[RMDB]
RNA sequence: GGGAACGACUCGAGUAGAGUCGAAAAACUUCCUGCUACACUUGGAGGAGGCUCUCAGAGGGAGGAGCCAAGUCCAGGAAUGCUGUCUCCCUCACUGACUCUGUCUUUUCAGAGCAAGGUAUCAGUGAGGAGGAACAAUAUUCGUAUUGUUCCUCCUAAAAGAAACAACAACAACAAC
Reactivity to DMS in 0.01 (KOAc 150mM, MgCl2 10mM, bicine 150mM(pH8.5), 24C), signal-to-noise 9, nucleotides 027 to 126: a100c300u010u000c020c010u000g020c040u010a100c300a110c010u000u000g000g000a030g000g010a300g010g010c010u000c010u010c080a110g010a110g000g000g020a300g000g000a030g020c000c030a010a300g000u000c010c010a010g000g000a080a090u000g000c040u000g000u000c070u010c030c020c010u000c010a030c020u000g000a060c010u000c010u000g010u000c300u000u000u000u010c110a040g010a020g010c220a060a060g010g010u010a150u000c010a010g010u000g000
Reactivity to 2A3 in 0.01 (KOAc 150mM, MgCl2 10mM, bicine 150mM(pH8.5), 24C), signal-to-noise 5, nucleotides 027 to 126: a000c040u060u030c010c010u020g030c030u050a040c070a020c090u020u040g010g010a010g010g000a020g010g000c000u000c010u020c030a050g060a080g140g080g010a070g010g020a000g000c000c000a010a000g040u000c000c000a000g010g030a050a030u070g010c030u040g100u020c070u020c030c000c000u010c010a020c010u020g020a050c000u010c000u020g050u090c080u150u130u090u090c030a020g010a010g020c020a060a060g090g020u100a050u120c010a010g010u010g060